[RMDB]
RNA sequence: GGGAACGACUCGAGUAGAGUCGAAAAAAAACGAUGUGACAGAUAUGACACGCCUUUUAAAAAACAUCAAUGGUAUGACUGGUCUUGGUUUAUCUGGAGGCGCAAAAGUAGAGGCUAUUCAGACAACCAAUGCGGAUUUUAUUGGUUACAUUGAGCAUAUGCUAGUACAGUUCGCUGUACUAGCAUAAAAAGAAACAACAACAACAAC
Reactivity to DMS in 0.01 (KOAc 150mM, MgCl2 10mM, bicine 150mM(pH8.5), 24C), signal-to-noise 2, nucleotides 027 to 156: a040a040a010a040c030g010a050u000g010u010g020a150c030a070g010a070u010a010u010g000a150c070a060c050g010c030c040u000u000u000u000a000a050a080a080a040a070c040a090u000c050a050a070u000g010g010u010a050u000g010a060c050u000g000g020u000c060u000u000g020g020u000u000u000a030u000c040u020g000g020a080g010g010c000g040c070a040a020a090a100g040u000a050g000a190g000g000c030u000a180u000u000c020a130g000a080c030a030a010c010c000a010a040u000g000c020g040g010a100u000u010u000u010a040u010u000g010g010u010u000a030c050a060u000u000g020a130g020c070a220
Reactivity to 2A3 in 0.01 (KOAc 150mM, MgCl2 10mM, bicine 150mM(pH8.5), 24C), signal-to-noise 3, nucleotides 027 to 156: a000a000a000a030c040g010a020u050g000u030g020a010c010a030g030a050u120a040u150g030a010c020a030c040g050c010c030u140u080u030u140a080a180a060a000a000a000c070a080u130c040a060a060u050g010g020u070a030u100g020a040c050u040g000g030u040c000u040u010g030g000u030u050u030a100u040c050u040g010g010a010g030g000c030g000c080a040a100a030a070g050u120a030g020a020g020g060c010u040a230u030u050c020a000g020a060c030a010a000c030c000a000a010u090g010c040g030g020a030u060u090u030u080a020u060u140g050g010u010u020a020c020a030u070u070g040a000g010c030a020